RNA sequence: GGGAACGACUCGAGUAGAGUCGAAAAAGCUGUACCCUUUUCCGUUAUAACUAGGAAAGAGAGGUGCAUGAUCUCGCGAAUUACUUCUGAAUAAAUUCAGAAAUUAUAUGUAAGAACCAUAGCAUUUCGCGAUUCAUUGGUAAAUCAAUUUUGAUUCGUUACCAAUUACGUUCGCGUAAUUGGUAACAAAAGAAACAACAACAACAAC
Reactivity to DMS in 0.01 (KOAc 150mM, MgCl2 10mM, bicine 150mM(pH8.5), 24C), signal-to-noise 2, nucleotides 027 to 156: a180g030c120u000g030u000a040c010c010c020u000u000u000u000c030c010g030u020u000a070u000a190a250c130u010a170g030g010a010a040a060g020a050g020a130g050g000u000g000c030a100u000g020a060u010c150u030c020g000c000g010a130a080u000u000a030c020u000u000c010u000g010a070a170u000a080a120a180u020u010c030a010g000a040a050a090u000u010a060u010a050u000g010u020a040a170g050a160a300c100c000a050u020a100g020c040a070u000u030u000c020g010c010g000a080u000u010c060a090u000u010g030g010u000a030a110a090u000c070a080a190u010u010u000u000g000a170u000u010c110
Reactivity to 2A3 in 0.01 (KOAc 150mM, MgCl2 10mM, bicine 150mM(pH8.5), 24C), signal-to-noise 4, nucleotides 027 to 156: a000g070c070u030g010u040a000c000c000c000u000u000u010u000c040c010g030u160u090a180u060a300a240c150u090a120g000g030a010a010a000g140a010g020a090g050g000u000g000c020a010u040g040a050u000c050u020c080g010c000g020a010a000u060u030a090c030u010u040c000u000g030a050a040u130a300a280a300u090u010c000a010g030a010a010a010u220u080a060u070a030u100g030u050a150a090g020a110a020c040c000a010u000a010g020c030a040u010u040u040c000g020c000g010a000u040u020c050a050u050u110g090g000u130a070a060a050u070c070a080a080u060u060u080u220g070a080u120u000c030
Source information:
This 207-nucleotide RNA was probed chemically with DMS and 2A3. High DMS reactivity at an A or C suggests that its Watson-Crick edge is free. The RNA was probed in 150 mM KOAc, 10 mM MgCl2 and 150 mM bicine (pH 8.5) at 24 C. High 2A3 reactivity points to a flexible backbone, as in loops and unpaired stretches. The 2A3 profile rests on 1,768 reads.